Structure probing data (DMS and 2A3) for a 177-nucleotide construct. The RNA was probed in 150 mM KOAc, 10 mM MgCl2 and 150 mM bicine (pH 8.5) at 24 C. The 2A3 profile rests on 3,534 reads. High DMS reactivity at an A or C suggests that its Watson-Crick edge is free. 2A3 adducts were read by reverse transcription with SuperScript II with manganese.
RNA sequence: GGGAACGACUCGAGUAGAGUCGAAAAGAUAUGGAGAACGGACAUGAAGGCUUCGGAAACGAAGUGGCCUUCAACAGCCGUCUCCUAAGUCAAAACAUUGCCACCCACUUCGGUGGGUGGCAAUGAAGGUUACAGAUAAGUUCGCUUAUCUGUAACCAAAAGAAACAACAACAACAAC
Reactivity to DMS in 0.01 (KOAc 150mM, MgCl2 10mM, bicine 150mM(pH8.5), 24C), signal-to-noise 3, nucleotides 027 to 126: g000a050u000a300u010g000g000a010g020a090a030c010g000g000a020c080a160u000g010a010a020g000g010c000u000u000c000g000g000a100a090a160c020g020a040a150g020u000g020g000c000c000u010u000c010a030a070c300a180g000c000c000g000u000c000u000c000c000u010a020a080g000u000c030a070a100a140a180c000a010u010u000g020c000c010a010c020c000c000a000c000u000u000c190g020g050u010g010g000g000u020g000g010c000a000a000u000g000a050a080
Reactivity to 2A3 in 0.01 (KOAc 150mM, MgCl2 10mM, bicine 150mM(pH8.5), 24C), signal-to-noise 2, nucleotides 027 to 126: g030a020u040a050u090g020g020a000g010a210a030c010g000g060a020c050a150u100g000a020a000g030g000c030u050u030c040g070g040a120a130a100c080g010a130a030g120u140g220g010c000c000u010u020c000a010a000c020a020g100c000c010g010u000c010u000c000c010u020a100a010g040u030c030a010a030a060a160c000a000u030u020g010c020c000a010c000c040c020a010c040u070u100c300g090g040u010g010g030g020u020g000g020c000a000a000u000g000a000a010